[RMDB]
RNA sequence: GGGAACGACUCGAGUAGAGUCGAAAAGACUCGUGAUCAAUGGCGUGAAGUACAUCUGGAGCUUAUGAAGGAUCCUAUUUCUCAGGAUUCACUAGAAACAAUCCAUAAGUCUUCCUUUAUGCUAUGACGUACUCAGCUAGUUCGCUAGCUGAGUACGAAAAGAAACAACAACAACAAC
Reactivity to 2A3 in 0.01 (KOAc 150mM, MgCl2 10mM, bicine 150mM(pH8.5), 24C), signal-to-noise 5, nucleotides 027 to 126: g070a020c020u030c040g050u050g070a100u070c100a100a170u090g010g000c000g020u010g020a020a000g020u100a050c050a230u100c130u160g000g010a020g010c000u010u010a020u030g060a110a050g020g010a010u010c000c000u050a110u090u230u030c220u050c100a010g000g010a000u010u020c040a050c050u060a080g160a090a110a020c110a040a100u070c040c000a000u010a010a010g050u060c010u020u020c040c000u030u040u030a030u070g000c000u040a030u080g020a020
Reactivity to DMS in 0.01 (KOAc 150mM, MgCl2 10mM, bicine 150mM(pH8.5), 24C), signal-to-noise 2, nucleotides 027 to 126: g030a120c010u000c050g020u030g010a150u000c040a050a090u010g020g000c030g060u000g070a040a000g000u030a110c150a030u000c180u000g020g010a060g030c010u000u000a000u000g000a080a060g000g000a000u000c000c000u000a060u020u020u090c060u000c160a070g000g000a010u000u000c090a090c250u050a050g130a180a070a090c230a160a090u010c060c030a020u000a010a020g000u030c040u010u000c000c030u000u050u010a060u000g030c060u000a090u000g000a250